Structure probing data (2A3 and DMS) for a 177-nucleotide construct. For 2A3 the reverse transcriptase was SuperScript II with manganese.
RNA sequence: GGGAACGACUCGAGUAGAGUCGAAAAGAAGAAUUUUUGCGAAAUUACGCAGUUUAUGAUGGUGUGCACCCGCUGAAGGAUUUCGUUGAAAUGAGAGCGAAAAAUGAAAUGCAGAUUUUUGGUGAUACAGAUAGGGGCUAUUCGUAGCCCCUAUCUGAAAAGAAACAACAACAACAAC
Reactivity to 2A3 in 0.01 (KOAc 150mM, MgCl2 10mM, bicine 150mM(pH8.5), 24C), signal-to-noise 2, nucleotides 027 to 126: g240a030a010g040a020a080u070u070u030u030u150g000c000g000a020a050a130u090u070a130c030g020c030a000g060u010u080u080a230u180g090a060u050g020g040u130g020u090g090c020a000c000c080c010g000c050u000g030a060a080g020g010a040u000u000u010c030g000u080u100g040a040a000a000u150g010a070g030a050g040c000g120a130a000a000a000a040u110g040a000a000a100u140g020c010a030g060a120u060u210u030u040u000g070g000u050g010a030u040a170
Reactivity to DMS in 0.01 (KOAc 150mM, MgCl2 10mM, bicine 150mM(pH8.5), 24C), signal-to-noise 3, nucleotides 027 to 126: g000a150a080g000a140a020u020u000u000u000u000g010c010g010a070a030a040u010u000a080c050g000c020a050g000u010u010u020a090u020g010a080u050g010g010u000g020u010g010c070a040c000c020c040g030c050u020g000a100a130g010g000a040u000u010u000c040g010u020u030g010a010a020a050u000g000a110g010a070g000c020g000a000a040a040a050a070u020g000a040a060a090u000g000c130a090g040a070u000u010u000u020u030g000g010u000g010a080u020a130
The RNA was probed in 150 mM KOAc, 10 mM MgCl2 and 150 mM bicine (pH 8.5) at 24 C. The 2A3 profile rests on 1,012 reads.